[RMDB]
RNA sequence: GGGAACGACUCGAGUAGAGUCGAAAACAACAGGAAAGGGUACAGCUGCACCAGCAAAGAAAGAAGCAAAGACUCCGUUCCCCAGUUGAACCGAUAAGUUUGGUCCCAGAACCCUCUCAACAAAAGCAGUCACAUAAGUAUUCGUACUUAUGUGACUAAAAGAAACAACAACAACAAC
Reactivity to 2A3 in 0.01 (KOAc 150mM, MgCl2 10mM, bicine 150mM(pH8.5), 24C), signal-to-noise 3, nucleotides 027 to 126: c010a010a000c010a030g070g090a130a060a080g050g010g020u070a060c030a030g000c020u040g000c000a040c040c030a020g010c030a030a080a040g130a020a150a020g070a060a000g020c020a130a070a000g050a050c010u020c030c010g020u030u000c000c010c010c000a010g000u050u050g010a040a010c030c020g030a080u030a140a040g020u030u040u070g010g000u000c010c010c000a010g020a040a040c020c000c010u010c010u020c030a020a110c020a030a020a090a000g070c020
Reactivity to DMS in 0.01 (KOAc 150mM, MgCl2 10mM, bicine 150mM(pH8.5), 24C), signal-to-noise 6, nucleotides 027 to 126: c070a070a080c100a080g000g000a080a060a090g010g000g010u010a090c100a080g010c030u010g000c060a060c080c040a080g000c060a060a090a110g010a060a070a070g000a070a060g010c050a050a080a120g000a080c040u000c040c020g000u000u000c000c000c000c090a080g010u000u000g010a070a080c060c040g000a080u000a060a090g000u000u000u000g010g010u000c000c010c010a170g000a070a190c030c030c020u000c050u000c060a030a030c090a050a050a080a090g020c180

Record summary:
Conditions: 150 mM KOAc, 10 mM MgCl2 and 150 mM bicine (pH 8.5), 24 C. This 177-nucleotide RNA was probed chemically with 2A3 and DMS. Values cover nucleotides 27 to 126.